[RMDB]
RNA sequence: GGGAACGACUCGAGUAGAGUCGAAAAGAAAGAAAGAAAGUGCUGUUGGAGGAUGAAGCCUUUGAGUGAUCCAUCGGCAGAGCUUGAUGUUGCUGUGCUGACACUCGUGCUGCUGACAAUGCACUAAUUUCCAUAAUAGGUUCGCCUAUUAUGGAAAAAAAGAAACAACAACAACAAC
Reactivity to DMS in 0.01 (KOAc 150mM, MgCl2 10mM, bicine 150mM(pH8.5), 24C), signal-to-noise 9, nucleotides 027 to 126: g010a100a100a110g010a090a090a110g010a100a100a040g010u000g000c010u020g030u000u000g000g000a300g000g000a060u010g100a110a040g010c020c210u020u030u020g010a020g020u010g000a130u010c130c240a150u000c020g000g000c010a010g000a030g010c030u010u020g010a140u030g010u020u010g000c010u000g000u000g000c020u000g000a050c020a010c010u000c010g010u020g010c020u000g010c020u000g000a250c030a030a060u010g000c000a010c010u010a050a100
Reactivity to 2A3 in 0.01 (KOAc 150mM, MgCl2 10mM, bicine 150mM(pH8.5), 24C), signal-to-noise 9, nucleotides 027 to 126: g100a010a040a000g100a030a070a000g120a060a140a010g010u030g010c060u060g030u100u010g020g020a030g030g020a050u100g170a050a010g000c010c020u110u170u210g010a020g000u010g020a060u110c060c030a060u040c020g010g000c010a010g010a000g080c020u160u140g070a120u230g240u290u100g010c010u040g020u010g160c020u010g000a010c010a000c000u000c010g020u100g000c000u010g000c000u000g000a020c010a020a030u060g000c000a000c000u010a020a110

Structure probing data (DMS and 2A3) for a 177-nucleotide construct. Conditions: 150 mM KOAc, 10 mM MgCl2 and 150 mM bicine (pH 8.5), 24 C.